[RMDB]
RNA sequence: GGGAACGACUCGAGUAGAGUCGAAAAUAUGGGCAGUUCGCUGCCCAUACGAGCGGAGUCCGGCACUAUGAGCCCGGAGCGUUGGUGCGUAGCCGCGGUGCAGAGACCAAGCCUUCGGGCUUGGUAAUCUAAUUUCACAUUUCGAUGUGAAAUUAGAAAAAGAAACAACAACAACAAC
Reactivity to 2A3 in 0.01 (KOAc 150mM, MgCl2 10mM, bicine 150mM(pH8.5), 24C), signal-to-noise 4, nucleotides 027 to 126: u080a010u010g000g000g000c010a010g010u030u040c140g050c110u000g000c000c010c000a000u000a000c000g020a020g020c020g020g040a040g080u020c020c000g020g030c020a010c050u210a150u270g110a040g030c030c060c070g090g020a040g020c040g050u060u170g110g020u100g020c040g030u050a020g020c020c010g000c050g040g000u110g020c070a030g020a010g030a180c000c010a000a010g010c000c000u040u080c200g050g000g000c000u000u000g000g000u010a000a000
Reactivity to DMS in 0.01 (KOAc 150mM, MgCl2 10mM, bicine 150mM(pH8.5), 24C), signal-to-noise 9, nucleotides 027 to 126: u000a000u000g000g010g010c000a010g010u000u020c220g020c000u000g000c000c000c000a000u000a000c060g010a140g010c020g000g000a130g000u000c020c010g000g010c030a070c090u000a070u010g010a150g010c070c020c090g000g000a090g010c060g010u010u000g010g010u000g010c040g010u000a150g010c020c030g010c030g010g030u010g010c100a120g000a170g000a050c000c000a010a020g000c000c000u000u010c210g030g010g010c010u000u000g000g000u000a020a050
An RNA of 177 nucleotides, treated with 2A3 and DMS and read out base by base. Source: RMDB library M2PK50, as collected in RNAgym. Reactivities are given for positions 27 through 126. The 2A3 profile rests on 6,293 reads. The RNA was probed in 150 mM KOAc, 10 mM MgCl2 and 150 mM bicine (pH 8.5) at 24 C. The DMS profile rests on 18,149 reads.